Background: Chemical mapping of a 177-nucleotide RNA with DMS and 2A3. For DMS the reverse transcriptase was MarathonRT. It was measured as part of the RMDB library VIROID. Conditions: 150 mM KOAc, 10 mM MgCl2 and 150 mM bicine (pH 8.5), 24 C.

[RMDB]
RNA sequence: GGGAACGACUCGAGUAGAGUCGAAAACCCAGCAGUUCACUCGAUGAUGCACAACUCCAGGGCUAGCGUCAAAAGUACCGCCCUGUGUCUUGUCUCCUCGUGGUGUCGAAGCAAUGGCGGAGUCCUACGUGUAUGCUGAGUUCGCUCAGCAUACACGAAAAGAAACAACAACAACAAC
Reactivity to DMS in 0.01 (KOAc 150mM, MgCl2 10mM, bicine 150mM(pH8.5), 24C), signal-to-noise 1, nucleotides 027 to 126: c010c000c010a240g030c110a080g020u000u000c030a110c050u000c030g000a060u030g000a020u030g010c180a060c050a020a070c030u000c010c060a020g000g000g010c020u010a110g010c140g030u000c140a080a090a100a110g010u000a030c160c080g000c010c010c000u010g010u000g020u020c090u020u000g010u010c010u000c010c020u000c000g040u020g020g020u000g020u010c090g010a140a070g010c060a060a080u000g000g010c010g010g000a070g000u000c020c020u000a050
Reactivity to 2A3 in 0.01 (KOAc 150mM, MgCl2 10mM, bicine 150mM(pH8.5), 24C), signal-to-noise 1, nucleotides 027 to 126: c010c010c010a010g050c040a030g060u080u090c010a000c050u020c020g070a070u080g020a010u100g040c160a020c010a010a050c000u000c020c030a000g030g000g020c010u090a040g080c030g080u010c030a150a150a150a010g060u110a070c020c030g030c000c000c000u030g020u020g020u000c050u000u060g000u000c020u050c040c000u000c060g090u110g030g030u010g050u030c020g070a090a030g020c000a050a070u060g050g020c090g070g060a040g020u020c010c020u070a060